[RMDB]
RNA sequence: GGGAACGACUCGAGUAGAGUCGAAAAGGACUGCGCAGUCCGGCAACAUCAGCAGAGAGGCCGCUAUACGUGACGGAUUGGCUGAAGCGUACAGAAAUAUUGAGCCUCCUGCAAGAGGCAGCCAAGCAAAACGUACGUGAGUUCGCUCACGUACGAACACCGGAGUUUACUUCGGUAAACUCCGGUGAAAAGAAACAACAACAACAAC
Reactivity to 2A3 in 0.01 (KOAc 150mM, MgCl2 10mM, bicine 150mM(pH8.5), 24C), signal-to-noise 1, nucleotides 027 to 156: g000g000a030c010u050g150c230g000c080a020g020u000c010c000g010g000c010a010a030c010a130u050c010a000g040c020a000g290a010g000a010g080g000c020c020g020c030u120a080u000a020c000g060u010g000a030c000g020g030a180u120u100g020g030c020u000g000a010a010g000c010g020u010a000c030a020g160a090a250a000u200a090u220u190g030a050g030c000c000u020c000c000u000g040c000a010a000g040a010g040g000c050a010g000c030c000a020a020g020c030a040a060a120a000c020g000u000a000c000g000u010g000a000g000u060u110c140g050c050u000c000a000c000g000u000a000c000g010a010a030